[RMDB]
RNA sequence: GGGAACGACUCGAGUAGAGUCGAAAAAUCCUCAGGUUCAUAAGCGUGAUGAUUGGGUGUUCUUGCUCCAUGCAUGACAUGUGCCUCCUUUGAACCUUGUUACGACCUUGGCACAUUACCCAUCUGAAAAAGACGUUCGCGUUCGCGCGAACGUCAACAAAUCUCGGAUGUUCGCAUCCGAGAUUUGAAAAGAAACAACAACAACAAC
Reactivity to DMS in 0.01 (KOAc 150mM, MgCl2 10mM, bicine 150mM(pH8.5), 24C), signal-to-noise 2, nucleotides 027 to 156: a100u000c010c020u020c050a060g010g010u010u000c010a040u000a070a080g030c120g040u030g000a160u020g000a060u010u020g010g040g000u000g000u020u000c060u000u000g010c040u010c110c100a120u000g040c030a030u000g010a100c170a300u000g040u000g030c000c000u000c090c040u000u030u000g000a040a020c010c010u010u010g020u000u000a130c190g000a080c100c070u010u010g030g030c010a030c030a100u000u000a080c010c020c000a080u000c050u000g010a040a090a110a100a170g000a060c000g040u010u000c000g060c030g030u000u010c300g050c000g000c010g020a030a000c000g030u010c000a010a040
Reactivity to 2A3 in 0.01 (KOAc 150mM, MgCl2 10mM, bicine 150mM(pH8.5), 24C), signal-to-noise 3, nucleotides 027 to 156: a010u030c010c000u000c010a010g030g000u000u000c020a020u070a280a030g040c070g130u110g090a080u040g010a030u110u250g020g020g010u030g030u060u040c010u010u010g000c010u060c170c090a130u290g000c000a020u020g010a020c010a030u010g000u000g000c000c000u030c010c010u020u010u020g010a000a000c000c000u000u080g080u020u100a100c100g030a090c020c060u060u100g000g000c000a000c010a010u000u170a040c000c010c000a010u010c020u020g060a080a070a050a050a040g000a000c000g000u000u000c010g000c000g000u030u020c170g010c010g000c020g100a000a000c000g010u000c000a000a010